[RMDB]
RNA sequence: GGGAACGACUCGAGUAGAGUCGAAAAAGAUCGAUUACGAUCGAUCAAUGAUGCCCCUCACCCACCUCUGAAGAUCCCAGGUGGGCGAGGGAACGGAGCACGGGAUCACUAGCAGUACGCUGCUCGAAAAAGAACUAGACCUUCGGGUCUAGUUCAAGGGAAUAAAAUGGUUCGCCAUUUUAUUCCCAAAAGAAACAACAACAACAAC
Reactivity to 2A3 in 0.01 (KOAc 150mM, MgCl2 10mM, bicine 150mM(pH8.5), 24C), signal-to-noise 3, nucleotides 027 to 156: a010g010a000u000c000g000a000u010u100a050c190g070a050u010c010g000a000u010c010a030a080u190g040a070u200g050c010c010c010c000u000c000a020c000c000c000a010c020c000u090c060u120g080a120a020g000a040u020c010c000c000a000g000g000u010g000g000g000c000g000a000g000g010g000a010a050c060g080g090a050g070c140a080c180g020g000g010a000u020c010a010c060u020a020g000c010a010g030u080a010c220g030c100u000g000c000u020c030g070a070a070a060a080a080g000a000a000c000u000a000g010a010c010c000u030u100c300g090g000g000u000c000u000a000g000u010u000c000a000a000
Conditions: 150 mM KOAc, 10 mM MgCl2 and 150 mM bicine (pH 8.5), 24 C. Structure probing data (2A3) for a 207-nucleotide construct. Reactivities are rounded to 0.1 and cut off at 0 and 3. The data come from the RNA Mapping Database (RMDB), library M2RFPK.